[RMDB]
RNA sequence: GGGAACGACUCGAGUAGAGUCGAAAAGUCUUCUGCUUCGGCAGAAGACAAAAUAAAAAGGCGGGCGCAUCACCCCUAUGAUGCGAAGUACAAAAGUACAAAAAAGCUUCGAGUUCGCUCGAAGCAACAUAUUGUUAACGUUCGCGUUAACAAUAUGAAAAGAAACAACAACAACAAC
Reactivity to DMS in 0.01 (KOAc 150mM, MgCl2 10mM, bicine 150mM(pH8.5), 24C), signal-to-noise 2, nucleotides 027 to 126: g000u000c000u000u000c000u010g000c000u000u010c240g020g020c000a010g000a020a020g000a010c000a020a020a050a080u010a060a070a070a090a170g000g010c160g010g010g010c010g000c000a020u000c000a070c100c040c040c060u000a100u010g000a010u000g010c010g000a060a110g020u000a020c020a080a080a080a150g000u000a020c000a020a050a070a110a080a160g030c000u000u010c000g000a000g000u000u000c190g020c020u000c000g010a020a000g010c020a020a050
Reactivity to 2A3 in 0.01 (KOAc 150mM, MgCl2 10mM, bicine 150mM(pH8.5), 24C), signal-to-noise 3, nucleotides 027 to 126: g000u000c000u010u020c000u010g020c010u030u100c220g160g000c010a020g000a000a000g000a000c000a000a000a000a000u010a000a020a010a010a000g170g030c160g150g010g070c050g000c020a000u000c000a010c010c040c020c030u030a060u080g010a000u010g000c000g040a060a000g010u010a010c030a030a300a070a070g010u010a020c010a010a200a020a020a030a010g020c000u000u000c000g010a010g040u040u080c140g060c100u000c010g020a000a000g030c000a000a000